This 177-nucleotide RNA was probed chemically with DMS and 2A3. For 2A3 the reverse transcriptase was SuperScript II with manganese. Values cover nucleotides 27 to 126. The RNA was probed in 150 mM KOAc, 10 mM MgCl2 and 150 mM bicine (pH 8.5) at 24 C. It was measured as part of the RMDB library M2PK90.

[RMDB]
RNA sequence: GGGAACGACUCGAGUAGAGUCGAAAAUUAUAUAGCGUGUGCUAGACGCUGAACUUGCCAUGAUCUGGAACUUUAGUGCUGAGGUCCGAGUUCCAGAUCAUCAUUUCGGACCUCAGCACUAAUAUAACUACUCUAGGAGAUUCGUCUCCUAGAGUAGAAAAGAAACAACAACAACAAC
Reactivity to DMS in 0.01 (KOAc 150mM, MgCl2 10mM, bicine 150mM(pH8.5), 24C), signal-to-noise 4, nucleotides 027 to 126: u000u010a080u000a140u000a040g010c000g010u000g020u000g010c120u000a110g010a060c030g000c020u000g000a070a080c160u000u010g010c020c040a040u000g010a120u010c090u000g020g000a110a080c150u010u000u000a010g010u000g000c000u000g010a020g010g000u000c000c010g010a020g010u000u000c080c070a080g000a040u000c080a030u000c080a060u000u000u000c010g010g000a010c000c000u000c010a000g000c000a000c000u000a010a000u010a060u000a070a170
Reactivity to 2A3 in 0.01 (KOAc 150mM, MgCl2 10mM, bicine 150mM(pH8.5), 24C), signal-to-noise 2, nucleotides 027 to 126: u150u050a070u040a030u140a200g030c020g010u060g090u110g100c050u080a050g020a100c030g030c090u030g040a070a030c030u050u090g070c030c020a110u050g010a090u070c010u020g030g060a020a090c030u080u020u020a040g010u000g010c000u000g000a000g000g020u020c020c010g010a000g010u070u030c020c010a020g030a000u010c000a000u000c000a040u030u070u030c000g000g000a010c000c000u000c000a000g000c000a000c000u000a000a000u010a000u000a000a020